This 177-nucleotide RNA was probed chemically with 2A3 and DMS. Reactivities are given for positions 27 through 126. Values are in units of 0.01, from 0 to 300, in steps of 10. Conditions: 150 mM KOAc, 10 mM MgCl2 and 150 mM bicine (pH 8.5), 24 C.

RNA sequence: GGGAACGACUCGAGUAGAGUCGAAAAGAUAUGGAGCAUUAUUUCGCAACAGCUCCUUCUCGGAAACGAGAACAUGGAGACAUGCGAUUCAUGCUCCUAAGUCAAAACGGGUGGUUCGCCACCCGAACAUUGAAGAAAUCUUCGGAUUUCUUCAAUGAAAAGAAACAACAACAACAAC
Reactivity to 2A3 in 0.01 (KOAc 150mM, MgCl2 10mM, bicine 150mM(pH8.5), 24C), signal-to-noise 8, nucleotides 027 to 126: g020a000u040a020u090g000g000a010g020c010a000u010u050a080u090u300u200c030g000c050a300a300c080a300g010c010u010c000c000u000u000c000u000c000g000g010a030a020a010c010g000a000g010a030a040c130a240u210g030g010a000g020a040c190a230u300g000c000g010a000u000u040c020a000u010g000c000u000c000c000u000a010a000g020u010c020a000a010a110a180c020g010g000g000u010g020g060u070u100c270g050c090c000a000c000c010c000g000a010a000
Reactivity to DMS in 0.01 (KOAc 150mM, MgCl2 10mM, bicine 150mM(pH8.5), 24C), signal-to-noise 7, nucleotides 027 to 126: g000a030u010a190u010g000g000a010g020c010a020u000u000a070u000u000u000c010g030c020a100a070c240a190g000c000u000c000c000u000u000c000u000c000g020g000a050a040a110c000g000a010g000a020a060c300a110u010g000g000a020g010a010c080a300u010g010c020g000a020u010u000c250a010u000g000c000u010c000c000u000a010a060g000u010c020a080a060a120a180c020g000g000g030u000g000g000u000u010c270g010c000c000a020c000c000c000g010a030a080
2A3 adducts were read by reverse transcription with SuperScript II with manganese. It was measured as part of the RMDB library TTRDES.